RNA sequence: GGGAACGACUCGAGUAGAGUCGAAAAUCCUAAGUCGAGGAGGGUGGAGUGAGUACAGGGAGGUCUCGGAAACGAGACCGAAGAACUGUACCUGAAUCUCCACCUCCCCACCCUCGAUAUGGAAAAAUCAUCAAUAGAGCUUCGGCUCUAUUGAUGAGUUGGGGAAAUAGUUCGCUAUUUCCCCAACAAAAGAAACAACAACAACAAC
Reactivity to 2A3 in 0.01 (KOAc 150mM, MgCl2 10mM, bicine 150mM(pH8.5), 24C), signal-to-noise 2, nucleotides 027 to 156: u020c000c000u010a030a000g010u000c000g000a000g010g000a000g000g000g000u010g000g000a010g010u050g020a040g020u000a000c000a020g000g010g010a010g010g000u000c000u000c000g000g010a020a010a000c000g000a010g000a020c020c000g010a080a000g010a010a000c000u000g010u000a000c000c010u080g160a120a200u060c000u020c000c000a000c000c000u010c000c000c010c000a010c000c000c000u000c000g000a000u000a030u060g020g030a050a050a030a070a050u080c000a000u050c000a000a000u050a000g000a000g010c020u050u080c300g110g000c000u010c000u000a000u000u000g000a000u000g000a020
Reactivity to DMS in 0.01 (KOAc 150mM, MgCl2 10mM, bicine 150mM(pH8.5), 24C), signal-to-noise 1, nucleotides 027 to 156: u000c000c030u000a000a290g000u000c000g000a020g030g010a300g010g050g010u010g000g000a090g040u000g000a110g020u000a000c030a030g000g000g000a300g090g070u000c020u030c040g000g000a070a120a220c040g020a040g000a030c000c000g000a060a120g000a170a200c000u000g030u000a010c040c010u000g030a140a290u000c000u000c020c010a000c000c000u000c100c010c000c010a220c210c010c000u020c010g010a100u000a110u000g000g010a030a120a050a090a300u000c020a020u010c000a020a010u000a040g000a010g040c000u000u010c300g080g000c020u010c000u010a000u000u010g050a020u010g000a010
Chemical mapping of a 207-nucleotide RNA with 2A3 and DMS. 2A3 is a SHAPE reagent: it acylates the 2'-hydroxyl of flexible nucleotides of all four kinds. The 2A3 profile rests on 4,115 reads. High DMS reactivity at an A or C suggests that its Watson-Crick edge is free. The data come from the RNA Mapping Database (RMDB), library RNAMAK. The RNA was probed in 150 mM KOAc, 10 mM MgCl2 and 150 mM bicine (pH 8.5) at 24 C.